Conditions: 150 mM KOAc, 10 mM MgCl2 and 150 mM bicine (pH 8.5), 24 C. Chemical mapping of a 207-nucleotide RNA with DMS and 2A3. The DMS profile rests on 2,221 reads. It was measured as part of the RMDB library RNAMAK. Values cover nucleotides 27 to 156. DMS adducts were read by reverse transcription with MarathonRT.
RNA sequence: GGGAACGACUCGAGUAGAGUCGAAAAGACAUUGUUCGCAAUGUCAAAAAGGGGUCUUACUGAGGAUUAGACAUGAGCUGAAGCCUCCACGGCUCAACAGCUAAUCUACCCACCAUGUAAGACGGAGGCACCCAAAAAAUGGUAGUUCGCUACCAAACUCACUAUAUAUCUUCGGAUAUAUAGUGAGAAAAGAAACAACAACAACAAC
Reactivity to DMS in 0.01 (KOAc 150mM, MgCl2 10mM, bicine 150mM(pH8.5), 24C), signal-to-noise 1, nucleotides 027 to 156: g000a000c010a040u000u000g030u000u020c200g040c030a000a000u030g010u000c010a080a000a060a160a060g000g000g050g020u010c010u000u000a020c060u020g000a110g020g020a100u000u000a020g010a050c050a290u010g000a000g030c010u010g000a100a090g040c020c010u000c130c130a270c180g010g000c000u000c000a010a080c040a100g000c030u000a020a110u000c050u000a070c040c040c050a300c060c050a080u000g020u000a000a000g000a030c000g000g020a140g040g030c140a130c000c000c010a000a010a080a050a060a150u000g010g020u010a040g000u000u010c300g030c000u010a050c020c000a000a030a150
Reactivity to 2A3 in 0.01 (KOAc 150mM, MgCl2 10mM, bicine 150mM(pH8.5), 24C), signal-to-noise 6, nucleotides 027 to 156: g000a000c000a010u020u020g020u050u070c100g000c110a030a010u010g000u030c050a000a040a000a060a080g100g010g010g000u020c020u020u020a020c030u060g100a130g100g020a140u080u090a030g030a070c060a100u080g010a000g000c000u020g040a130a000g020c000c010u010c030c020a030c030g010g000c000u010c010a040a070c060a030g130c020u040a050a030u030c020u090a140c010c030c040a040c040c040a050u220g000u020a010a020g010a010c030g000g000a010g010g000c020a040c000c010c010a050a070a030a040a010a030u090g010g000u010a010g020u040u090c220g020c090u000a000c000c000a020a020a110